[RMDB]
RNA sequence: GGGAACGACUCGAGUAGAGUCGAAAACUGGCGCAAGCCAGGGCAAGUGAGGCGCAAGCCUCGCUGACGGCGUGGAAAGGGCUCUCUCUGAGGCCCGAGUACGCUGAAAGUGCCACAGAAACGUAGCGAUCUCUAUCCAAUUCGUUGGAUAGAGAUCAAAAGAAACAACAACAACAAC
Reactivity to DMS in 0.01 (KOAc 150mM, MgCl2 10mM, bicine 150mM(pH8.5), 24C), signal-to-noise 9, nucleotides 027 to 126: c010u000g000g010c000g010c240a120a170g010c000c010a020g010g010g010c050a110a050g020u010g010a010g000g010c010g010c270a120a160g010c000c000u000c000g010c000u000g000a300c090g000g010c010g020u000g000g010a070a180a220g000g010g000c010u040c010u000c020u030c140u060g000a020g010g000c000c000c000g000a070g000u020a030c000g000c010u000g000a070a160a100g010u010g000c000c010a160c190a110g000a080a070a060c110g010u030a110g000c240
Reactivity to 2A3 in 0.01 (KOAc 150mM, MgCl2 10mM, bicine 150mM(pH8.5), 24C), signal-to-noise 7, nucleotides 027 to 126: c000u000g000g000c010g000c040a100a050g000c000c010a010g010g010g000c020a040a020g030u010g020a000g000g000c000g010c040a040a030g000c000c000u000c000g000c000u020g010a040c020g020g020c020g020u050g030g050a130a080a080g020g000g010c030u030c000u020c010u030c170u300g020a030g010g020c000c000c000g000a000g010u020a000c000g000c000u000g040a030a040a020g110u080g030c000c010a070c010a050g140a060a120a020c100g060u120a050g080c030
Structure probing data (DMS and 2A3) for a 177-nucleotide construct. For 2A3 the reverse transcriptase was SuperScript II with manganese. For DMS the reverse transcriptase was MarathonRT. The RNA was probed in 150 mM KOAc, 10 mM MgCl2 and 150 mM bicine (pH 8.5) at 24 C.